[RMDB]
RNA sequence: GGGAACGACUCGAGUAGAGUCGAAAAUUUAAGAGCGUUGAUGUCUCUGUCACGAUACGAGUAAGUGACUCUCGUGUACUACUGACGAAUGAGACAGAGACAUUUAUGCUCAGUGUCAGUCAAGGAAGUUCUAUACCCCCUUCGGGGGGUAUAGAACAAAAGAAACAACAACAACAAC
Reactivity to DMS in 0.01 (KOAc 150mM, MgCl2 10mM, bicine 150mM(pH8.5), 24C), signal-to-noise 1, nucleotides 027 to 126: u000u020u000a160a060g010a010g000c020g030u000u000g020a030u010g010u010c000u000c000u010g020u000c000a110c140g040a160u000a080c000g020a080g000u000a000a080g060u000g050a050c110u000c190u000c170g000u010g000u030a070c050u000a090c020u000g000a130c060g000a150a100u000g000a080g000a010c010a030g010a010g000a010c000a010u000u010u000a000u000g000c000u010c000a100g010u010g020u000c040a060g030u000c100a060a100g000g000a110a100
An RNA of 177 nucleotides, treated with DMS and read out base by base. The RNA was probed in 150 mM KOAc, 10 mM MgCl2 and 150 mM bicine (pH 8.5) at 24 C.